Source: RMDB library TTRDEL, as collected in RNAgym. An RNA of 177 nucleotides, treated with DMS and 2A3 and read out base by base. For DMS the reverse transcriptase was MarathonRT. The RNA was probed in 150 mM KOAc, 10 mM MgCl2 and 150 mM bicine (pH 8.5) at 24 C.

RNA sequence: GGGAACGACUCGAGUAGAGUCGAAAAGAUAUGGACAAACAGCGAUAAGCUCCUGGUCGGAAACGACCAUGAGCUUUUGACGCUGGUAGUCCUAAGUCAAACAAAGCCUAGUUCGCUAGGCUUUGAAUCUCUUCUAUAUCUUCGGAUAUAGAAGAGAAAAAGAAACAACAACAACAAC
Reactivity to DMS in 0.01 (KOAc 150mM, MgCl2 10mM, bicine 150mM(pH8.5), 24C), signal-to-noise 2, nucleotides 027 to 126: g010a020u010a240u010g000g000a010c000a060a180a270c010a010g010c010g020a160u000a030a030g010c000u000c000c060u000g000g010u000c010g010g010a060a060a100c000g010a010c000c000a000u000g010a010g010c000u000u000u010u010g010a180c040g010c000u000g000g010u000a260g000u000c000c000u000a020a120g000u010c030a110a110a260c010a000a000a010g010c000c000u000a010g010u000u000c270g020c010u000a000g000g000c000u000u000u000g010a100a110
Reactivity to 2A3 in 0.01 (KOAc 150mM, MgCl2 10mM, bicine 150mM(pH8.5), 24C), signal-to-noise 3, nucleotides 027 to 126: g020a000u040a020u090g010g000a000c010a010a300a010c000a050g000c020g100a110u080a300a030g000c010u000c000c010u010g000g000u000c000g010g020a020a040a020c000g000a000c000c000a000u010g000a000g020c020u020u000u010u080g020a010c000g000c000u000g000g010u020a010g000u000c000c000u000a020a010g020u010c040a050a090a120c010a040a000a000g000c000c000u000a010g010u050u080c210g000c110u000a000g000g000c000u000u000u000g000a000a020